[RMDB]
RNA sequence: GGGAACGACUCGAGUAGAGUCGAAAACUGGGUUACGUAUCUCCAGACGCGUAUGCUUUGAAGAUGCUUUCAGAAAAUAGCGAACAAAUUGCUAAUUUUGUUCGCGAAGCUCAGAUUAUUACGAGCAUAAUUAGCCUAUGUUCGCAUAGGCUAAUUAAAAAGAAACAACAACAACAAC
Reactivity to DMS in 0.01 (KOAc 150mM, MgCl2 10mM, bicine 150mM(pH8.5), 24C), signal-to-noise 8, nucleotides 027 to 126: c020u000g010g010g010u000u000a070c190g010u000a030u010c010u000c020c010a030g010a030c220g020c050g000u010a060u020g020c020u000u010u000g010a020a020g000a020u000g010c020u000u010u000c130a140g000a100a080a100a110u010a140g000c000g010a010a010c000a000a010a020u000u010g020c190u030a090a070u000u000u000u000g010u000u000c000g010c000g000a070a100g010c000u000c010a050g010a180u010u010a090u010u010a110c180g000a020g010c020a220
Reactivity to 2A3 in 0.01 (KOAc 150mM, MgCl2 10mM, bicine 150mM(pH8.5), 24C), signal-to-noise 4, nucleotides 027 to 126: c000u020g000g000g100u090u100a030c040g010u040a050u020c020u000c010c000a030g010a060c060g050c010g110u290a060u300g030c030u000u040u050g020a030a020g010a000u040g000c000u040u130u080c040a050g190a060a120a030a040u140a030g010c000g000a000a000c010a010a020a050u120u200g080c050u110a050a190u050u050u010u030g000u000u010c000g000c020g010a020a010g000c000u010c020a030g010a100u040u110a060u080u110a210c100g010a000g040c020a010
The data come from the RNA Mapping Database (RMDB), library OK2TST. An RNA of 177 nucleotides, treated with DMS and 2A3 and read out base by base. The RNA was probed in 150 mM KOAc, 10 mM MgCl2 and 150 mM bicine (pH 8.5) at 24 C. For 2A3, 4,272 sequencing reads were counted. 2A3 adducts were read by reverse transcription with SuperScript II with manganese.